[RMDB]
This 177-nucleotide RNA was probed chemically with 2A3 and DMS.
RNA sequence: GGGAACGACUCGAGUAGAGUCGAAAAUUGCUUGGGGUGUAAACCUCGUAACUGAGUUCAGUCUUUUAAGUAGUUGGGAAGAAAAAUUUUGCAGAAGUCUCAAGCUAUAAGUAAACAAAUUGGCAAACAUCGUAGGUAUUUUCGAAUACCUACGAUGAAAAGAAACAACAACAACAAC
Reactivity to 2A3 in 0.01 (KOAc 150mM, MgCl2 10mM, bicine 150mM(pH8.5), 24C), signal-to-noise 4, nucleotides 027 to 126: u070u040g040c000u020u020g020g000g030g010u050g040u070a050a080a050c020c000u000c020g020u020a060a090c050u070g070a020g090u160u180c030a040g040u020c110u040u230u030u110a170a120g010u080a060g020u100u110g070g000g030a000a060g160a080a050a020a030a050u130u140u100u180g040c070a050g010a180a040g040u000c000u000c020a000a000g000c000u020a040u000a090a100g090u140a070a050a070c100a050a090a100u080u080g090g000c040a000a070a000
Reactivity to DMS in 0.01 (KOAc 150mM, MgCl2 10mM, bicine 150mM(pH8.5), 24C), signal-to-noise 4, nucleotides 027 to 126: u030u000g010c030u000u000g000g000g000g020u000g000u010a060a010a100c190c000u000c020g000u030a070a110c180u070g000a060g010u010u020c100a090g010u010c000u000u000u000u020a040a150g010u010a030g000u010u000g010g010g000a040a050g020a040a070a060a060a140u000u040u020u010g010c060a080g010a100a140g000u010c010u010c000a010a020g010c000u000a070u020a050a040g010u040a070a080a130c110a050a050a080u030u020g000g020c080a050a030a110
Background
The RNA was probed in 150 mM KOAc, 10 mM MgCl2 and 150 mM bicine (pH 8.5) at 24 C.